Source: RMDB library OK3TST, as collected in RNAgym.
Chemical mapping of a 207-nucleotide RNA with DMS and 2A3.
The DMS profile rests on 2,366 reads.
RNA sequence: GGGAACGACUCGAGUAGAGUCGAAAACAGAAUCAGGUAGACAUUCAAUAGCGAAUAUUUUAAUUGCUACUGAAAACGGAAAAUGCUACUUGUUGCAGCUCGUCAAAACACCAGAAAAAGCGUUUCCGACGAUUCGUAUUAGAGAUGAAUUCGUUCACUAAAUGAGGAGGUUCGCCUCCUCAUUUAGAAAAGAAACAACAACAACAAC
Reactivity to DMS in 0.01 (KOAc 150mM, MgCl2 10mM, bicine 150mM(pH8.5), 24C), signal-to-noise 2, nucleotides 027 to 156: c060a260g040a090a140u000c030a110g030g060u000a060g020a210c090a240u010u000c010a020a000u000a030g050c000g050a030a170u010a090u020u010u000u000a000a190u000u010g010c010u000a020c010u000g000a020a030a120a190c110g010g000a060a010a100a140u000g000c030u000a110c070u000u000g000u000u000g020c000a130g010c100u000c020g020u010c020a070a030a010a020c030a040c030c000a230g020a050a060a060a140a040g000c030g020u000u000u000c020c030g000a040c010g000a130u000u010c060g040u000a130u000u010a140g010a180g030a100u000g000a120a150u010u000c010g070u000u000c050a190
Reactivity to 2A3 in 0.01 (KOAc 150mM, MgCl2 10mM, bicine 150mM(pH8.5), 24C), signal-to-noise 3, nucleotides 027 to 156: c040a040g100a060a040u050c000a020g050g040u030a020g090a110c010a040u000u040c020a070a070u010a010g000c000g070a080a060u090a110u160u240u080u110a130a040u050u080g000c000u000a020c000u040g020a040a000a040a100c110g040g000a100a030a000a000u080g000c010u000a030c000u030u010g040u030u070g010c020a010g020c030u030c100g070u060c040a040a050a060a040c050a040c030c050a040g190a100a050a000a050a020g060c020g020u000u010u000c010c010g000a000c020g000a010u010u020c010g010u040a120u140u270a070g070a030g030a100u130g050a010a080u170u070c030g070u070u080c020a000